[RMDB]
RNA sequence: GGGAACGACUCGAGUAGAGUCGAAAACAGAUCUCCGACACCAAGCACCUCGCGUGAAGCGCUGGUGAGGGCCACGAUCGGCGUCGAAAGUUCAUCCGAAUCCAGAAAUUUGGGUGUGUUCUCCGUCGCCAUAAAUUAGCUUCGGCUAAUUUAUGGCAAAAGAAACAACAACAACAAC
Reactivity to 2A3 in 0.01 (KOAc 150mM, MgCl2 10mM, bicine 150mM(pH8.5), 24C), signal-to-noise 5, nucleotides 027 to 126: c050a020g070a130u020c040u000c040c000g040a030c010a000c030c020a080a030g040c010a020c010c000u050c040g040c020g070u190g150a200a030g050c010g010c110u040g010g010u020g020a070g010g030g000c050c070a100c050g030a150u030c030g020g010c000g080u040c010g040a080a040a040g050u060u050c020a020u000c020c000g030a010a020u000c030c080a100g110a120a120a020u050u020u030g000g000g000u030g000u000g000u010u000c050u010c010c040g070u080c080
Reactivity to DMS in 0.01 (KOAc 150mM, MgCl2 10mM, bicine 150mM(pH8.5), 24C), signal-to-noise 3, nucleotides 027 to 126: c090a110g010a050u050c030u000c000c030g050a130c060a050c060c010a040a160g050c050a040c000c010u000c080g060c120g040u040g030a130a120g000c000g040c110u020g010g040u000g010a130g000g000g040c120c050a090c090g020a090u010c090g000g020c210g000u010c040g000a100a090a080g010u000u000c000a040u000c020c010g000a020a030u000c090c140a170g030a120a070a090u020u010u000g020g020g020u000g020u020g030u020u000c020u000c010c080g000u020c100